[RMDB]
RNA sequence: GGGAACGACUCGAGUAGAGUCGAAAAGAAAAAGGAGGACAUGUCCGCCUGAUUGUGUCCGACCCUGUAGAUACUUCGCUCUGGAUAUUGUGCGGGACAACCCACGCGCGCAGCGAGCCGAAAAAAACUCAUCCUCUAAGUUCGCUUAGAGGAUGAGAAAAGAAACAACAACAACAAC
Reactivity to 2A3 in 0.01 (KOAc 150mM, MgCl2 10mM, bicine 150mM(pH8.5), 24C), signal-to-noise 2, nucleotides 027 to 126: g020a010a200a000a010a020g030g010a030g000g000a000c010a040u080g000u030c030c010g060c090c190u050g000a050u030u180g000u010g030u020c000c000g020a170c020c000c000u000g000u060a040g050a100u070a140c060u010u020c010g020c030u010c030u040g130g050a070u070a120u230u130g010u020g000c030g040g000g060a080c050a070a130c010c010c020a090c020g110c000g020c010g000c010a010g010c040g040a010g020c060c050g030a040a020a020a010a010a020a000
Reactivity to DMS in 0.01 (KOAc 150mM, MgCl2 10mM, bicine 150mM(pH8.5), 24C), signal-to-noise 3, nucleotides 027 to 126: g000a080a150a060a050a070g000g010a270g000g010a000c050a060u010g010u000c020c160g010c080c090u010g010a070u000u010g070u000g010u010c000c000g000a140c060c020c030u000g010u010a090g000a130u000a090c130u000u000c040g010c010u010c020u000g000g000a100u010a040u000u010g040u000g020c030g010g000g020a120c120a060a110c060c020c030a180c100g000c020g020c050g020c080a060g030c040g020a060g010c060c020g000a000a000a050a060a040a040a100